Annotation
This 177-nucleotide RNA was probed chemically with 2A3 and DMS. The 2A3 profile rests on 1,362 reads. The data come from the RNA Mapping Database (RMDB), library OK2TRN. The DMS profile rests on 958 reads.

RNA sequence: GGGAACGACUCGAGUAGAGUCGAAAAUGCACACGCCAUCGGUCAUGAUGAGGUCGAGCGCGAAAUAUUCAAUGAAGAACUGCGCAUUGUUCUUCAGCGACUGGCCGUAAAGCGUAUGCAGGAUGGAAUCGCUCACUCAGUUCGCUGAGUGAGCGAUAAAAGAAACAACAACAACAAC
Reactivity to 2A3 in 0.01 (KOAc 150mM, MgCl2 10mM, bicine 150mM(pH8.5), 24C), signal-to-noise 1, nucleotides 027 to 126: u000g000c020a000c000a000c020g000c010c000a070u070c000g000g000u000c000a020u100g090a040u030g010a070g000g010u010c020g000a010g040c030g040c020g050a040a020a020u210a020u010u080c080a050a180u290g060a000a080g020a010a020c010u100g040c040g010c150a260u040u000g000u040u000c000u020u010c000a000g000c010g060a020c050u030g000g030c000c050g040u020a110a020a000g020c000g000u000a000u020g000c000a010g000g110a040u170g040g040a090
Reactivity to DMS in 0.01 (KOAc 150mM, MgCl2 10mM, bicine 150mM(pH8.5), 24C), signal-to-noise 1, nucleotides 027 to 126: u020g020c000a010c010a070c010g000c000c050a300u010c030g050g020u000c030a060u000g030a060u020g010a040g000g010u000c020g020a100g010c010g000c030g030a010a060a090u020a110u000u000c050a140a110u000g000a050a050g000a040a070c110u010g010c070g000c050a110u000u000g020u010u000c010u010u000c000a000g000c030g020a170c230u000g010g020c000c000g000u020a030a110a120g000c000g000u000a010u000g000c000a000g000g010a120u000g000g000a080